[RMDB]
RNA sequence: GGGAACGACUCGAGUAGAGUCGAAAAAGGUCAUCGGCUUUGAGGUACUCUUGGAGGAUGGCAUGGUGGUCAACGCCUGCGGUCUGACUGAAGAACAGAAGGGCGAGUUCACAGCUAAAGUCGCUGAGAACCAGGAUACCUUCGGGUAUCCUGGUUCAAAAGAAACAACAACAACAAC
Reactivity to DMS in 0.01 (KOAc 150mM, MgCl2 10mM, bicine 150mM(pH8.5), 24C), signal-to-noise 1, nucleotides 027 to 126: a150g000g010u000c000a010u010c020g000g020c040u000u000u000g010a080g020g010u080a030c080u000c010u040u020g000g000a120g000g000a010u000g000g070c010a040u020g010g000u060g010g060u000c090a030a130c000g000c020c040u050g000c110g000g000u020c000u000g000a210c170u000g070a100a000g020a150a000c070a050g010a100a180g000g000g000c030g060a010g000u000u000c040a130c210a000g050c040u050a060a060a140g000u000c070g000c060u030g010a260
Reactivity to 2A3 in 0.01 (KOAc 150mM, MgCl2 10mM, bicine 150mM(pH8.5), 24C), signal-to-noise 1, nucleotides 027 to 126: a000g000g030u090c030a030u030c110g030g000c080u040u130u200g030a040g130g020u070a140c030u040c000u180u050g020g000a040g060g000a080u110g000g000c000a040u100g050g000u020g010g010u100c050a020a080c000g050c030c020u070g000c020g000g060u030c000u070g030a110c010u090g010a130a010g010a070a000c010a080g150a060a100g020g000g000c010g070a000g090u100u070c050a050c000a060g000c030u140a170a000a000g050u000c020g010c050u000g050a030